[RMDB]
RNA sequence: GGGAACGACUCGAGUAGAGUCGAAAAUUAUUACUUCGCUUUGGAUGCUAAGGUACUGGACAAGGUUCCUCUUCACUGCAGCACCAGCAGUUGCGUUCCUUUCUGGGAUUGGAGUUUACGAGCUAACCGAAUUUCAAAUCUUCGGAUUUGAAAUUCGAAAAGAAACAACAACAACAAC
Reactivity to DMS in 0.01 (KOAc 150mM, MgCl2 10mM, bicine 150mM(pH8.5), 24C), signal-to-noise 1, nucleotides 027 to 126: u010u020a050u000u000a050c040u000u000c100g020c060u030u000u020g010g010a110u010g020c050u010a080a240g010g000u000a040c020u000g020g010a090c120a180a140g000g030u000u000c040c020u000c080u000u000c120a040c070u000g000c220a020g010c080a120c100c030a040g020c090a020g000u000u000g020c090g010u000u000c010c010u000u000u000c030u000g000g000g010a160u030u010g020g000a050g020u000u000u010a110c140g000a060g000c060u030a060a130c130

Overview:
The record gives the reactivity of an RNA of 177 nucleotides to DMS. Reactivities are given for positions 27 through 126. The RNA was probed in 150 mM KOAc, 10 mM MgCl2 and 150 mM bicine (pH 8.5) at 24 C.